[RMDB]
RNA sequence: GGGAACGACUCGAGUAGAGUCGAAAAACGCCGGGUUGAAGGACAAGACGGCAUGAGCACCGAGGUGAUCGUCGCUCUGUGCAGCUUGGUCGGCGUCGUCGUGACGGCGAUCCUGGCGCACCGGGCCGGCGGGCGUGCGGCGCUGCGGGGCGCGGAGAACUUGAGUUCAUUUCGAUGAACUCAAGUUAAAAGAAACAACAACAACAAC
Reactivity to 2A3 in 0.01 (KOAc 150mM, MgCl2 10mM, bicine 150mM(pH8.5), 24C), signal-to-noise 1, nucleotides 027 to 156: a020c060g000c040c000g020g020g020u040u100g130a080a030g050g040a040c040a040a000g050a040c020g000g030c020a050u100g060a040g010c020a020c020c030g030a060g060g100u110g030a120u050c010g050u020c020g040c000u000c020u020g000u000g010c160a130g000c010u020u040g010g020u000c010g030g120c010g000u000c000g060u040c080g140u300g050a000c020g010g120c020g010a050u120c000c010u020g000g000c010g020c020a020c020c020g010g010g000c090c040g030g000c020g000g020g010c040g090u060g020c010g030g000c010g000c050u080g050c000g000g050g020g000c060g000c030g050g010a170g040